[RMDB]
RNA sequence: GGGAACGACUCGAGUAGAGUCGAAAAGAUAUGGAGUGCCCUAGGGAGCAGUUGUCGGAAACGACAAUACUGCGUUGAUCUAGUGGCACUCCUAAGUCAAAAUCGCAUAGGGUUCGCCCUAUGCGAACGUCAUACUAGGGUUCGCCCUAGUAUGACGAAAAGAAACAACAACAACAAC
Reactivity to 2A3 in 0.01 (KOAc 150mM, MgCl2 10mM, bicine 150mM(pH8.5), 24C), signal-to-noise 2, nucleotides 027 to 126: g020a010u030a030u160g000g000a000g010u000g020c020c010c000u010a010g030g040g080a060g030c010a020g010u020u000g020u030c000g000g010a080a040a060c000g030a000c000a030a050u260a100c000u000g010c000g030u100u060g010a030u030c000u010a010g020u300g030g000c000a000c000u000c000c000u000a000a000g000u010c010a000a020a020a300u050c010g000c030a010u000a000g060g000g040u030u090c300g170c010c000c000u000a000u020g000c000g000a000a010
Reactivity to DMS in 0.01 (KOAc 150mM, MgCl2 10mM, bicine 150mM(pH8.5), 24C), signal-to-noise 3, nucleotides 027 to 126: g000a030u000a300u000g010g000a020g000u000g020c010c000c000u000a000g030g010g020a010g010c000a020g000u000u000g000u000c000g030g000a180a110a240c010g000a030c000a040a060u000a100c010u000g010c010g010u010u000g020a050u010c020u000a010g020u020g030g010c000a010c010u000c000c000u010a000a060g000u020c040a110a090a120a190u000c000g020c000a000u010a020g000g000g010u000u000c200g000c000c000c000u000a010u000g010c010g000a000a030
This 177-nucleotide RNA was probed chemically with 2A3 and DMS. For 2A3 the reverse transcriptase was SuperScript II with manganese.